[RMDB]
RNA sequence: GGGAACGACUCGAGUAGAGUCGAAAAUCCUAAGUCCAAGGACGAAACCUAGCGAUGAAACUAGUUGUCAGUAUUCGGAAACGAAUACUUGGAUUUACUAGUGGAGCUAGACUGACGGUACUUGGAUAUGGAAAAACGGAUACUUCGGUAUCCGUAAGCCGUAAACGUGAUUCGUCACGUUUACGGCAAAAGAAACAACAACAACAAC
Reactivity to 2A3 in 0.01 (KOAc 150mM, MgCl2 10mM, bicine 150mM(pH8.5), 24C), signal-to-noise 1, nucleotides 027 to 156: u000c000c000u000a110a000g020u000c000c000a000a010g000g030a040c010g020a010a040a020c010c000u000a000g010c000g300a300u070g050a060a000a000c000u000a000g000u020u030g000u020c070a000g010u000a000u000u000c010g010g000a090a060a150c000g020a000a000u000a000c030u010u110g080g030a050u130u190u300a040c000u000a000g000u000g000g000a000g040c000u000a000g000a010c030u040g120a000c000g050g050u300a040c000u000u010g000g000a000u070a040u020g020g020a000a000a080a060a000c000g000g000a000u000a000c000u000u130c300g080g020u000a010u000c000c000g000u000a010a060